[RMDB]
RNA sequence: GGGAACGACUCGAGUAGAGUCGAAAAUUAAUUUUCGGUCAUUUUUGAUAGUGUAGCCUUGCGUUUGACAAGCGUUGAGGUGAAAUAAAGUCUUAGCCUUGCUUUUGAGUUUUGGAAGAUGAGCGAAGUAGGGUGAAGUAGUCAUCUUUGCUAAGCACUAAUAGCACUUCUUCGGAAGUGCUAUUAGAAAAGAAACAACAACAACAAC
Reactivity to 2A3 in 0.01 (KOAc 150mM, MgCl2 10mM, bicine 150mM(pH8.5), 24C), signal-to-noise 2, nucleotides 027 to 156: u020u030a020a090u080u080u070u090c110g010g020u010c050a050u010u110u180u110u180g070a100u190a090g140u110g010u060a020g000c000c000u000u000g000c000g110u030u010u040g020a060c030a020a020g010c010g030u040u300g010a000g000g030u040g020a010a020a000u100a060a160a010g030u010c000u060u190a010g000c000c000u000u010g000c010u010u080u180u250g120a020g020u080u060u060u090g050g010a000a000g000a010u010g000a000g010c010g000a000a000g000u030a030g010g000g010u000g020a020a000g010u020a020g020u000c000a030u000c010u020u020u030g090c100u130a110a030g070c020a030
Reactivity to DMS in 0.01 (KOAc 150mM, MgCl2 10mM, bicine 150mM(pH8.5), 24C), signal-to-noise 2, nucleotides 027 to 156: u010u010a050a040u010u000u010u020c020g040g020u020c030a100u010u000u000u000u010g000a070u000a080g040u000g010u000a300g000c020c020u000u000g000c010g010u010u000u020g030a070c130a180a250g010c000g010u000u000g050a010g010g010u040g000a080a080a130u000a060a070a110g010u000c000u010u000a150g020c000c000u010u020g010c020u000u000u000u010g040a150g020u010u000u000u000g000g020a120a110g020a040u000g000a070g020c020g000a070a050g000u000a050g030g010g020u000g000a050a120g000u000a100g040u000c020a060u000c020u000u000u010g050c020u010a050a160g040c100a190

The data come from the RNA Mapping Database (RMDB), library ARCHII. Structure probing data (2A3 and DMS) for a 207-nucleotide construct.